[RMDB]
RNA sequence: GGGAACGACUCGAGUAGAGUCGAAAAGAGAAGUUCGCUUCUCAAAAAUCCUAAGUCUCACCAUGUGUUGUCAGUACGAUAAGUGUCGGAAACGACACUUUUGACGUACUUGGAUUUACACAGGUGAGAUAUGGAAAAAAAGUACCUUCGGGUACAACGGAAUCAGUAGGUUCGCCUACUGAUUCCGAAAAGAAACAACAACAACAAC
Reactivity to 2A3 in 0.01 (KOAc 150mM, MgCl2 10mM, bicine 150mM(pH8.5), 24C), signal-to-noise 1, nucleotides 027 to 156: g010a000g010a000a010g000u060u180c170g080c140u040u000c000u010c030a090a000a090a000a000u020c000c000u070a190a100g050u000c000u000c000a000c010c030a300u020g000u000g000u000u020g010u000c020a000g000u000a000c000g000a020u020a060a010g000u000g020u000c000g020g020a120a060a050c000g030a000c000a010c040u000u000u010u030g040a000c000g000u000a000c000u010u100g050g000a060u270u250u140a000c000a000c000a010g030g000u000g000a000g000a000u010a010u000g000g050a000a010a000a060a110a020a090g060u090a010c010c000u000u090c250g150g010g000u010a000c000a050a050